[RMDB]
RNA sequence: GGGAACGACUCGAGUAGAGUCGAAAAGAUGAGAAACUCAGGCUGGGAUGUUGCCACUUUUUCAAAGUCACAGCUAGUGUGAAGUGUGAGUGGCAGAAUCAGAACUCGAACACAGGCCCCUUGGAUCCAUCACCUAAGCACUUCGCCGCUAGGCUGAGGACUCGAUUAUAUUCGUAUAAUCGAGUCCAAAAGAAACAACAACAACAAC
Reactivity to 2A3 in 0.01 (KOAc 150mM, MgCl2 10mM, bicine 150mM(pH8.5), 24C), signal-to-noise 3, nucleotides 027 to 156: g030a030u060g010a030g050a200a060a060c040u050c110a010g040g000c020u030g090g020g040a070u050g030u120u040g000c010c010a010c000u030u050u050u050u060c110a150a160a030g010u040c020a010c000a070g060c140u220a140g170u020g000u000g090a030a060g030u020g010u010g070a000g010u010g000g000c010a000g040a010a050u090c020a010g050a090a040c030u040c120g050a110a010c070a010c020a070g120g050c000c000c000c000u040u060g000g030a010u030c020c000a020u040c010a020c020c000u040a140a050g020c030a030c090u080u050c090g020c040c000g060c110u050a070g050g000c010u010g030a020
Reactivity to DMS in 0.01 (KOAc 150mM, MgCl2 10mM, bicine 150mM(pH8.5), 24C), signal-to-noise 1, nucleotides 027 to 156: g000a200u020g000a150g010a190a070a090c030u000c010a060g000g030c030u000g010g030g020a110u000g020u000u000g010c020c010a050c020u000u000u010u010u000c030a080a170a170g010u000c030a050c030a100g020c200u000a120g000u000g030u010g000a030a060g010u020g000u020g000a040g000u000g000g000c030a020g010a030a060u000c040a090g020a040a090c030u010c050g000a100a090c090a170c080a080g010g000c010c000c030c030u000u000g010g000a120u010c030c000a150u000c050a040c030c000u000a060a000g070c010a110c140u000u010c030g040c000c000g060c070u000a070g010g010c000u000g010a150